[RMDB]
RNA sequence: GGGAACGACUCGAGUAGAGUCGAAAAAACCCUCUUGGUGGCUUCCCUGUAAAUGCUUCCAAGAUAUGAGCGAAUGCUAUAGAAAUUGCAGGAAAGUCCAAAGGGCUGCGCGUCUCCUGUGGCUCAGCAAAUUGAAACAAUUCGUUGUUUCAAUUUGAAAAGAAACAACAACAACAAC
Reactivity to DMS in 0.01 (KOAc 150mM, MgCl2 10mM, bicine 150mM(pH8.5), 24C), signal-to-noise 8, nucleotides 027 to 126: a080a050c010c010c010u000c050u010u000g000g020u010g000g000c010u000u000c040c010c010u000g000u000a020a040a050u020g000c010u000u000c020c020a090a070g010a120u020a060u030g000a060g020c050g010a120a050u040g020c020u010a130u020a120g010a080a110a110u010u010g010c010a010g000g000a080a050a040g010u000c010c040a060a080a090g000g010g010c020u000g000c060g010c080g010u000c040u000c030c040u000g020u010g010g010c020u000c050a090g000
Reactivity to 2A3 in 0.01 (KOAc 150mM, MgCl2 10mM, bicine 150mM(pH8.5), 24C), signal-to-noise 9, nucleotides 027 to 126: a000a000c020c010c000u030c030u020u060g040g010u060g040g010c000u020u020c020c010c000u010g030u040a080a110a050u130g000c000u020u010c010c010a040a010g060a110u130a160u180g090a030g010c070g060a140a060u230g010c020u040a020u020a120g040a030a130a020u070u030g000c000a000g000g000a070a040a000g060u060c030c030a070a090a070g020g010g000c010u040g000c040g010c020g050u010c020u030c010c010u030g020u040g030g000c010u020c040a020g030